Annotation:
Source: RMDB library OK2TRN, as collected in RNAgym. Structure probing data (2A3 and DMS) for a 177-nucleotide construct. 2A3 adducts were read by reverse transcription with SuperScript II with manganese. Reactivities are given for positions 27 through 126. For DMS the reverse transcriptase was MarathonRT. The RNA was probed in 150 mM KOAc, 10 mM MgCl2 and 150 mM bicine (pH 8.5) at 24 C.
RNA sequence: GGGAACGACUCGAGUAGAGUCGAAAACGUACGCUCAUGGUGAUCGUACCCAUGCCAUGGGAUCGUACUGUCGUACGAUCGAUCCCAUGUGUCAUGACUAGGGAUCAUCUAGCAUAUCUAGUGACGGAAAGUGCAGAAAGUUCGCUUUCUGCACUUUAAAAGAAACAACAACAACAAC
Reactivity to 2A3 in 0.01 (KOAc 150mM, MgCl2 10mM, bicine 150mM(pH8.5), 24C), signal-to-noise 4, nucleotides 027 to 126: c010g030u050a020c030g020c010u070c070a120u150g000g000u030g010a010u010c040g190u130a060c000c000c020a000u000g030c000c000a010u000g000g000g000a010u000c000g020u050a170c020u140g190u190c200g070u140a070c070g010a100u090c020g020a020u000c010c010c000a000u010g090u040g090u100c010a000u020g010a020c050u070a110g090g050g000a000u000c000a020u000c010u000a010g000c020a030u060a050u100c070u080a090g070u100g260a020c010g020g050
Reactivity to DMS in 0.01 (KOAc 150mM, MgCl2 10mM, bicine 150mM(pH8.5), 24C), signal-to-noise 7, nucleotides 027 to 126: c050g010u000a040c040g000c010u000c300a060u010g010g020u000g010a020u000c010g010u000a130c300c130c010a020u000g010c010c010a010u000g000g000g010a010u000c000g010u010a060c070u010g020u010c250g020u000a130c060g000a090u010c080g010a040u000c010c000c000a010u010g010u000g010u010c020a000u000g000a050c050u010a130g020g010g010a020u000c010a020u000c010u000a050g000c030a060u000a050u000c090u000a080g000u000g000a070c040g010g000